RNA sequence: GGGAACGACUCGAGUAGAGUCGAAAAUGUGAAGUCCGGAUGGGAAAGCAUGCUCUUGACCCAUCCGAAACGUACGGCGGCCUGGAUGGGAAAGCAUGCCGCGGAUGGGAAAGCAUGCUGAGUGAAUCCUCCAUCCGAAACGUACGUCAUUAAGUGCUCUGAUUACGCUAUUCGUAGCGUAAUCAGAAAAAGAAACAACAACAACAAC
Reactivity to 2A3 in 0.01 (KOAc 150mM, MgCl2 10mM, bicine 150mM(pH8.5), 24C), signal-to-noise 3, nucleotides 027 to 156: u180g060u040g090a080a020g060u030c070c000g000g000a000u010g000g020g040a150a040a030g000c010a010u020g000c010u040c030u090u120g120a210c010c000c010a000u000c020c000g000a020a000a000c030g030u070a020c020g000g000c030g000g010c020c050u070g080g020a120u140g210g010g010a000a040a010g060c020a040u120g010c000c000g010c000g000g000a010u030g000g000g020a010a030a020g140c000a000u000g000c000u000g010a030g030u140g070a070a050u030c020c010u010c000c000a000u000c000c000g000a090a050a010c010g010u010a000c010g020u000c020a040u040u200a110a010g100u130g060c040
Reactivity to DMS in 0.01 (KOAc 150mM, MgCl2 10mM, bicine 150mM(pH8.5), 24C), signal-to-noise 1, nucleotides 027 to 156: u060g020u000g010a090a110g060u020c020c000g000g000a040u020g000g020g010a120a120a040g020c010a010u010g020c140u000c110u010u010g000a270c000c000c000a040u010c000c010g010a000a010a060c150g000u010a090c050g020g040c000g050g020c020c100u000g030g030a110u000g010g030g000a080a050a070g000c010a090u000g040c000c000g000c010g010g030a030u000g010g030g010a090a110a040g020c000a010u010g010c030u000g000a090g030u000g040a140a150u000c050c010u000c000c010a030u000c000c020g000a040a060a020c070g000u000a020c060g020u000c050a100u010u000a050a080g030u000g020c120
Source: RMDB library OK3TST, as collected in RNAgym. The record gives the reactivity of an RNA of 207 nucleotides to 2A3 and DMS. For DMS the reverse transcriptase was MarathonRT.